[RMDB]
RNA sequence: GGGAACGACUCGAGUAGAGUCGAAAAGGAUAGAAGAACAGGACCACGGGUCCGUCGGAUAGCAGGACGCUAAGCCUGCGAGGAGUCCCGGUCUGAUCGGGCAGUUCGAAGUCGGCUACCGUGUCACGACGCUCAAAGAGUUCGCUCUUUGAGCGUCAAAAGAAACAACAACAACAAC
Reactivity to DMS in 0.01 (KOAc 150mM, MgCl2 10mM, bicine 150mM(pH8.5), 24C), signal-to-noise 2, nucleotides 027 to 126: g000g000a110u000a060g010a110a070g000a080a040c100a090g040g030a030c120c020a080c100g020g020g010u000c000c010g010u000c020g000g010a090u000a080g020c020a040g000g000a080c070g050c210u020a080a100g000c010c000u010g000c000g000a150g000g000a130g020u010c010c020c010g000g000u000c120u000g000a100u000c010g010g030g030c060a130g010u000u010c050g000a120a080g000u020c020g000g000c030u010a140c010c030g020u000g000u010c110a120c230
Reactivity to 2A3 in 0.01 (KOAc 150mM, MgCl2 10mM, bicine 150mM(pH8.5), 24C), signal-to-noise 1, nucleotides 027 to 126: g180g000a120u180a120g130a150a020g010a060a020c030a110g080g000a010c020c050a040c070g060g000g050u040c030c000g000u000c000g030g010a000u030a030g000c010a020g020g010a030c010g010c170u060a100a040g040c020c010u000g000c020g000a010g000g060a040g080u110c000c000c000g000g070u080c150u160g060a160u150c030g030g030g000c060a040g050u070u030c040g020a060a010g090u060c000g040g000c000u060a110c000c040g020u030g000u020c050a000c110